Description
This 177-nucleotide RNA was probed chemically with 2A3 and DMS. Source: RMDB library OK1LIB, as collected in RNAgym. For DMS the reverse transcriptase was MarathonRT. In probing experiments dimethyl sulfate is read out at A N1 and C N3, which are open when not base-paired.

RNA sequence: GGGAACGACUCGAGUAGAGUCGAAAAGACAGUCGAAAGAACGUACGUUCGAGGCCCCGAUCGUACGGAAGCCAUCUUAUCUGGCGGGAUAUGAUGGGAAGAACCGCCGAGGCCGAAAAGACUGGAAGGAUAUGUCUAUCUUCGGAUAGACAUAUCCAAAAGAAACAACAACAACAAC
Reactivity to 2A3 in 0.01 (KOAc 150mM, MgCl2 10mM, bicine 150mM(pH8.5), 24C), signal-to-noise 9, nucleotides 027 to 126: g090a020c010a000g020u010c010g070a040a070a060g050a090a020c020g030u160a010c070g000u020u010c020g010a130g030g050c020c010c000c000g010a040u090c020g010u050a020c000g020g040a040a010g040c000c000a040u040c050u080u090a060u060c050u100g080g070c100g050g030g000a030u060a030u160g080a060u060g030g020g040a080a050g040a050a030c000c010g000c010c010g010a080g000g000c010c010g020a060a040a000a000g040a020c000u000g010g030a040a060
Reactivity to DMS in 0.01 (KOAc 150mM, MgCl2 10mM, bicine 150mM(pH8.5), 24C), signal-to-noise 6, nucleotides 027 to 126: g010a200c030a010g000u000c010g000a100a080a100g000a060a060c010g020u010a020c110g010u000u000c000g010a140g020g000c010c010c040c010g000a070u010c120g010u020a070c030g000g000a120a110g010c000c000a030u000c030u000u020a030u000c020u010g020g010c140g000g010g010a040u010a020u000g010a020u010g000g000g020a090a090g000a110a150c020c040g000c110c020g000a100g010g010c020c020g020a100a100a070a100g000a010c000u000g000g020a120a130